[RMDB]
RNA sequence: GGGAACGACUCGAGUAGAGUCGAAAAUUUUGAGGUUAAGUGGGCCGUGUUCCCUUGGCAAGCCUGACAGUAGCGGAACAGGGUCUAGAAGCCAAGGUUUGGAUGUGAUGCUAGUUUACUGAUUGGUCUUUGCUUCUCUGCAAAAAUAUCUACAUCACGCGUAUAUUUACUUCGGUAAAUAUACGCGAAAAGAAACAACAACAACAAC
Reactivity to 2A3 in 0.01 (KOAc 150mM, MgCl2 10mM, bicine 150mM(pH8.5), 24C), signal-to-noise 2, nucleotides 027 to 156: u140u160u030u120g100a080g010g000u050u050a090a000g070u110g030g000g000c040c020g020u000g000u030u040c000c010c000u000u040g040g030c060a080a030g090c050c050u030g060a010c030a090g130u180a050g040c090g060g000a070a030c000a020g030g010g090u050c020u050a040g050a070a020g000c010c050a030a020g070g010u000u020u140g120g000a030u040g000u020g030a000u020g040c040u010a050g050u060u050u030a060c040u020g060a080u060u060g040g000u030c060u060u050u030g010c000u030u080c030u020c040u050g030c030a040a020a050a050a090u110a060u090c040u070a060c030a120u120c040a030
Reactivity to DMS in 0.01 (KOAc 150mM, MgCl2 10mM, bicine 150mM(pH8.5), 24C), signal-to-noise 1, nucleotides 027 to 156: u000u000u000u000g030a080g000g000u000u010a090a090g020u000g020g020g030c040c080g050u000g040u000u000c040c000c000u000u000g000g000c040a160a140g040c070c020u000g000a070c080a130g060u000a050g000c070g020g010a100a270c090a120g020g000g040u000c030u000a090g000a110a140g000c010c010a050a110g010g010u010u000u030g010g000a060u000g000u000g010a070u010g010c040u000a020g000u000u000u000a110c090u000g040a190u000u010g000g000u000c040u000u000u000g000c030u000u000c020u000c010u000g040c030a020a090a040a100a130u000a160u000c010u000a030c020a090u000c070a110